[RMDB]
An RNA of 177 nucleotides, treated with 2A3 and read out base by base.
RNA sequence: GGGAACGACUCGAGUAGAGUCGAAAAGUGCCACAAUCACAAAUCAUCACGCAUGAUGCGAAGCAGUUUGCGGCAACUAUUCGCCCGCAAUUUAUUGCUUACCAAAUUCCAAUAGGAUUAGGCUCAACCCAGUCCCUUACUUCGGUAAGGGACUGGGAAAAGAAACAACAACAACAAC
Reactivity to 2A3 in 0.01 (KOAc 150mM, MgCl2 10mM, bicine 150mM(pH8.5), 24C), signal-to-noise 3, nucleotides 027 to 126: g040u040g010c010c000a050c090a050a040u030c030a060c110a110a160a030u040c040a010u020c010a020c210g040c030a030u010g000a000u100g120c060g040a060a020g020c010a030g000u010u020u000g040c000g000g010c020a090a020c030u170a130u300u200c130g040c060c030c000g040c000a000a010u070u220u170a110u200u060g000c000u000u030a040c000c000a030a170a130u120u040c010c010a090a160u170a200g050g000a050u070u050a010g030g000c000u030c080a040a040
The data come from the RNA Mapping Database (RMDB), library OK1LIB. The 2A3 profile rests on 858 reads. For 2A3 the reverse transcriptase was SuperScript II with manganese.